The data come from the RNA Mapping Database (RMDB), library 15KLIB.
Chemical mapping of a 170-nucleotide RNA with DMS and 2A3.
The DMS profile rests on 52,922 reads.
For DMS the reverse transcriptase was MarathonRT.
The RNA was probed in 150 mM KOAc, 10 mM MgCl2 and 150 mM bicine (pH 8.5) at 24 C.

RNA sequence: GGGAACGACUCGAGUAGAGUCGAAAAUAAGACCAUAGCGAUGGGGGGAGAUGCUAGGAGUUGGGGGAGACCGAAGCGAGGAGGAAAGCAAAGAAAGCAACGGGGCUAGCCGUCAGGUGUUCCUCCCUAACCUUUGAGUUCGCUCAAAGGAAAAGAAACAACAACAACAAC
Reactivity to DMS in 0.01 (KOAc 150mM, MgCl2 10mM, bicine 150mM(pH8.5), 24C), signal-to-noise 9, nucleotides 027 to 129: u080a090a080g000a160c030c050a080u040a080g000c080g030a080u040g020g000g030g000g000g010a060g010a040u030g000c100u000a040g020g010a070g020u030u040g010g000g010g010g000a090g000a040c050c030g000a110a060g020c200g000a050g000g000a030g000g030a000a060a030g030c150a060a070a100g000a080a090a060g000c140a030a060c070g010g010g010g020c080u000a060g000c000c000g010u000c100a090g000g000u000g020u000u000c030c010u000c030c030c020u050a090a090
Reactivity to 2A3 in 0.01 (KOAc 150mM, MgCl2 10mM, bicine 150mM(pH8.5), 24C), signal-to-noise 9, nucleotides 027 to 129: u180a030a020g050a020c000c020a060u080a020g090c070g060a060u090g020g000g000g000g020g000a020g000a020u080g030c020u040a040g010g030a060g030u130u120g020g000g000g000g000a010g030a000c010c010g020a030a010g030c040g010a020g010g000a000g000g010a040a020a010g010c040a030a040a040g050a040a060a000g020c030a020a070c030g030g000g030g010c030u040a020g030c010c000g060u060c040a030g000g030u030g030u060u030c000c020u040c000c000c000u060a100a110